RNA sequence: GGGAACGACUCGAGUAGAGUCGAAAAACAACACGCUUCGGCGUGUUGUCGACGGAGGAAGCUGAGGACGCGCUUGUGCCGCAGCAGGGAAGCGCAGCGUAAAUCAGAGGUGAUUCGUCACCUCUAAAUAUGUUACUCUAUUCGUAGAGUAACAUAUAAAAGAAACAACAACAACAAC
Reactivity to DMS in 0.01 (KOAc 150mM, MgCl2 10mM, bicine 150mM(pH8.5), 24C), signal-to-noise 9, nucleotides 027 to 126: a030c000a000a010c000a010c000g020c000u000u010c200g030g010c000g020u000g010u000u000g010u000c040g010a080c080g000g000a070g000g000a090a090g010c040u010g000a070g010g010a150c150g010c060g010c060u000u010g020u000g010c030c030g010c060a070g010c070a070g000g000g000a130a060g010c070g020c030a040g010c070g010u000a040a100a100u010c150a020g000a020g000g010u000g000a050u000u010c170g010u000c000a030c010c000u000c010u000a010a060
Reactivity to 2A3 in 0.01 (KOAc 150mM, MgCl2 10mM, bicine 150mM(pH8.5), 24C), signal-to-noise 9, nucleotides 027 to 126: a000c000a000a000c000a000c010g010c000u040u070c230g140g000c000g000u000g000u000u000g000u010c010g020a030c030g020g040a030g040g030a080a020g020c030u040g030a040g050g030a040c050g040c000g010c070u090u110g050u080g040c030c020g020c020a040g020c030a030g020g020g020a050a010g010c020g000c030a010g010c020g050u100a050a060a080u130c060a020g000a010g020g020u020g010a030u020u050c100g030u010c050a010c000c000u000c000u000a010a040

An RNA of 177 nucleotides, treated with DMS and 2A3 and read out base by base. For DMS, 68,141 sequencing reads were counted. The 2A3 profile rests on 61,094 reads. Conditions: 150 mM KOAc, 10 mM MgCl2 and 150 mM bicine (pH 8.5), 24 C. For DMS the reverse transcriptase was MarathonRT.